Chemical mapping of a 177-nucleotide RNA with 2A3 and DMS. Source: RMDB library OK2TST, as collected in RNAgym. For 2A3 the reverse transcriptase was SuperScript II with manganese. Conditions: 150 mM KOAc, 10 mM MgCl2 and 150 mM bicine (pH 8.5), 24 C. For DMS, 553 sequencing reads were counted.
RNA sequence: GGGAACGACUCGAGUAGAGUCGAAAAUCCAAAGACUCAACCAUUUGGAUCGAUGUGCCUUAUCCUUCAUAUCCAUCGACAUUAGUCUUCAAGAUGAGCUUCGGUGUGCCACGAAAGGUACACAACAGACCCUAUCCCACUUCGGUGGGAUAGGGUCAAAAGAAACAACAACAACAAC
Reactivity to 2A3 in 0.01 (KOAc 150mM, MgCl2 10mM, bicine 150mM(pH8.5), 24C), signal-to-noise 1, nucleotides 027 to 126: u000c010c000a010a050a020g070a020c030u020c060a050a070c060c000a190u080u140u130g070g000a030u020c040g020a050u030g020u070g040c000c020u110u060a130u150c000c010u030u010c050a020u080a050u240c000c060a060u010c050g000a010c010a020u070u170a020g070u060c000u070u040c080a100a080g060a130u080g050a020g030c040u060u040c140g010g010u010g000u020g000c030c000a080c120g140a060a040a000g050g020u020a000c000a000c000a030a000c000a010
Reactivity to DMS in 0.01 (KOAc 150mM, MgCl2 10mM, bicine 150mM(pH8.5), 24C), signal-to-noise 1, nucleotides 027 to 126: u000c000c000a040a040a050g000a000c060u000c120a070a150c190c190a050u000u030u000g000g020a150u000c070g000a100u000g000u000g000c020c010u000u000a050u020c040c000u000u000c060a030u000a020u010c090c010a010u000c010g030a090c130a190u000u050a180g000u000c000u000u000c120a130a160g050a020u000g000a150g000c050u000u000c050g000g060u000g000u000g000c020c030a040c020g000a120a020a050g000g000u000a000c000a000c110a090a040c300a120